This 177-nucleotide RNA was probed chemically with 2A3 and DMS. The reactions ran in a buffer of 150 mM KOAc, 10 mM MgCl2 and 150 mM bicine (pH 8.5), at 24 C. It was measured as part of the RMDB library OK1LIB. Reactivities are given for positions 27 through 126.
RNA sequence: GGGAACGACUCGAGUAGAGUCGAAAACUGUCAGCGAACGGUUCUUCUUAGGAGGUGAAACCACUGUUCGCGGUUACAAACCUUUUAUUAUUGGACCGAAAUUUUCUCCUACUGAACCACAAGGAGGACUCACUAUAUCAUUCGUGAUAUAGUGAGUAAAAGAAACAACAACAACAAC
Reactivity to 2A3 in 0.01 (KOAc 150mM, MgCl2 10mM, bicine 150mM(pH8.5), 24C), signal-to-noise 9, nucleotides 027 to 126: c050u080g100u180c060a040g040c050g110a090a060c010g010g010u020u000c010u030u000c000u030u060a050g020g040a010g010g020u070g040a090a040a010c020c020a040c060u090g160u230u140c110g010c050g030g000u030u040a110c100a060a140a090c010c000u030u050u030u030a070u070u030a100u090u140g020g000a010c010c010g080a070a060a070u140u090u040u020c010u010c010c000u040a130c050u090g090a130a090c040c010a060c070a110a020g020g000a010g000g020
Reactivity to DMS in 0.01 (KOAc 150mM, MgCl2 10mM, bicine 150mM(pH8.5), 24C), signal-to-noise 8, nucleotides 027 to 126: c090u000g010u010c080a060g010c120g000a090a150c010g000g010u000u000c020u000u000c020u000u010a030g010g000a010g010g010u010g000a110a050a040c060c040a050c060u020g020u040u030c140g010c060g010g000u000u000a080c190a110a140a050c020c010u000u000u010u010a030u000u010a040u040u000g000g000a020c010c000g010a080a100a130u020u020u000u000c010u000c000c010u000a160c120u020g010a090a140c070c090a070c160a070a040g000g010a020g010g000